RNA sequence: GGGAACGACUCGAGUAGAGUCGAAAAGUCGGUGGGCAGCGACGGCGUGACAAUGUACCCGGUGGUGAAGUCCCCAUAGAUCGUGACAUCGGCGGGCCGGCGUUGGGCGUACAACGCCACGUAGGCGGAUGCAACAACCAUUCGUGGUUGUUGCAUCAAAAGAAACAACAACAACAAC
Reactivity to 2A3 in 0.01 (KOAc 150mM, MgCl2 10mM, bicine 150mM(pH8.5), 24C), signal-to-noise 2, nucleotides 027 to 126: g030u030c010g020g010u050g020g020g090c060a070g040c060g010a030c030g030g020c090g050u070g020a020c030a090a070u100g010u090a070c000c070c110g080g080u300g000g020u000g030a060a040g030u000c000c000c000c000a040u050a100g150a160u050c010g040u050g030a000c000a030u020c010g010g000c050g000g050g000c000c000g030g000c040g020u100u040g160g030g010c040g000u030a090c060a140a000c080g000c000c000a010c010g080u040a050g030g000c030g010
Reactivity to DMS in 0.01 (KOAc 150mM, MgCl2 10mM, bicine 150mM(pH8.5), 24C), signal-to-noise 3, nucleotides 027 to 126: g020u000c030g020g020u010g000g010g040c030a120g030c030g000a060c090g000g010c080g030u010g010a070c060a060a060u010g020u020a090c030c030c140g010g030u000g000g020u010g000a060a170g010u000c010c000c000c020a100u020a100g000a130u010c040g000u000g010a070c060a050u000c000g010g000c010g000g020g020c010c000g000g020c020g000u020u010g010g010g010c060g020u000a110c190a050a130c030g000c000c000a020c070g000u010a060g000g020c040g020
Structure probing data (2A3 and DMS) for a 177-nucleotide construct. For 2A3, 2,829 sequencing reads were counted. The reactions ran in a buffer of 150 mM KOAc, 10 mM MgCl2 and 150 mM bicine (pH 8.5), at 24 C. Values are in units of 0.01, from 0 to 300, in steps of 10.